Structure probing data (2A3 and DMS) for a 177-nucleotide construct.
2A3 adducts were read by reverse transcription with SuperScript II with manganese.
The DMS profile rests on 2,394 reads.
[RMDB]
RNA sequence: GGGAACGACUCGAGUAGAGUCGAAAACAAACGGAAAAAAGGGACCCCAUACACACAUCCAUAAUGACAGCGCACAAGUGUCGCAGAUUUGAAGGGAAGCUUGCAGUUGUGACAGCAAGUACUGCUGGACUUGUAUUCGAUUCGUCGAAUACAAGUCAAAAGAAACAACAACAACAAC
Reactivity to 2A3 in 0.01 (KOAc 150mM, MgCl2 10mM, bicine 150mM(pH8.5), 24C), signal-to-noise 2, nucleotides 027 to 126: c020a020a030a030c060g110g030a050a090a020a020a050a180g060g000g030a020c010c020c050c010a010u160a040c070a010c010a000c000a020u000c010c030a040u080a180a040u130g060a050c030a050g000c050g020c020a000c030a110a120g030u070g010u120c040g000c030a010g020a150u090u130u120g060a040a040g030g000g010a050a020g010c020u070u070g020c050a000g000u090u040g070u070g130a000c000a000g000c010a030a110g040u050a070c070u040g000c010u050g030
Reactivity to DMS in 0.01 (KOAc 150mM, MgCl2 10mM, bicine 150mM(pH8.5), 24C), signal-to-noise 3, nucleotides 027 to 126: c050a090a110a130c170g000g010a010a040a110a060a110a130g000g000g000a110c040c040c000c040a090u020a080c080a060c080a070c080a070u010c040c060a080u000a020a060u010g010a110c140a060g010c040g040c070a090c060a040a090g020u020g010u000c040g000c050a030g010a110u000u010u010g020a080a080g000g000g020a080a090g010c040u000u000g020c050a040g000u010u000g010u010g010a120c040a030g000c030a030a120g010u010a070c110u010g000c020u000g000
Conditions: 150 mM KOAc, 10 mM MgCl2 and 150 mM bicine (pH 8.5), 24 C. DMS adducts were read by reverse transcription with MarathonRT. The data come from the RNA Mapping Database (RMDB), library OK2TRN. Values cover nucleotides 27 to 126.